The record gives the reactivity of an RNA of 207 nucleotides to DMS and 2A3.
Conditions: 150 mM KOAc, 10 mM MgCl2 and 150 mM bicine (pH 8.5), 24 C.
For DMS, 2,384 sequencing reads were counted.
DMS adducts were read by reverse transcription with MarathonRT.

RNA sequence: GGGAACGACUCGAGUAGAGUCGAAAAUCCUAAGUCCUUAGCUUUUGACGUUUGGUGACCAUGGAGCUAUAUCGGAAACGAUAUAGCUAUGAAGUGGUCGAGAGAACGAUAAGCUAAGGAUAUGGAAAACGUAACAUCCCUUCGGGGAUGUUACGAACGAAAAAUGCAUGUUCGCAUGCAUUUUUCGAAAAGAAACAACAACAACAAC
Reactivity to DMS in 0.01 (KOAc 150mM, MgCl2 10mM, bicine 150mM(pH8.5), 24C), signal-to-noise 1, nucleotides 027 to 156: u000c000c000u000a100a230g050u010c020c020u000u000a000g030c000u000u000u000u000g050a180c000g000u030u000u010g000g000u000g010a000c000c010a000u020g000g020a010g000c010u000a000u000a000u000c000g000g000a240a180a260c000g030a050u010a000u000a010g000c000u000a020u000g000a050a250g000u000g000g040u000c010g020a210g040a220g010a000a000c000g050a180u030a000a030g010c010u020a020a030g040g020a000u000a020u000g000g000a100a120a080a140c020g000u010a000a010c000a010u000c010c010c000u000u000c300g040g000g040g000a000u010g010u020u000a020c000g000a020a070
Reactivity to 2A3 in 0.01 (KOAc 150mM, MgCl2 10mM, bicine 150mM(pH8.5), 24C), signal-to-noise 3, nucleotides 027 to 156: u040c010c000u040a080a030g020u000c010c000u010u000a000g000c020u150u170u090u110g280a090c020g010u010u030u020g120g030u170g020a010c020c020a010u020g010g020a000g000c000u010a000u000a000u000c010g010g050a070a020a060c000g000a000u000a000u000a000g000c000u010a130u010g010a020a000g010u020g000g000u020c020g010a050g010a000g020a010a010c010g050a050u020a070a000g020c000u000a000a000g000g000a000u000a010u000g010g050a000a180a020a030c020g000u000a000a000c010a000u020c010c000c030u020u050c220g020g000g000g010a000u000g000u000u000a000c000g000a000a000
2A3 adducts were read by reverse transcription with SuperScript II with manganese. Values cover nucleotides 27 to 156.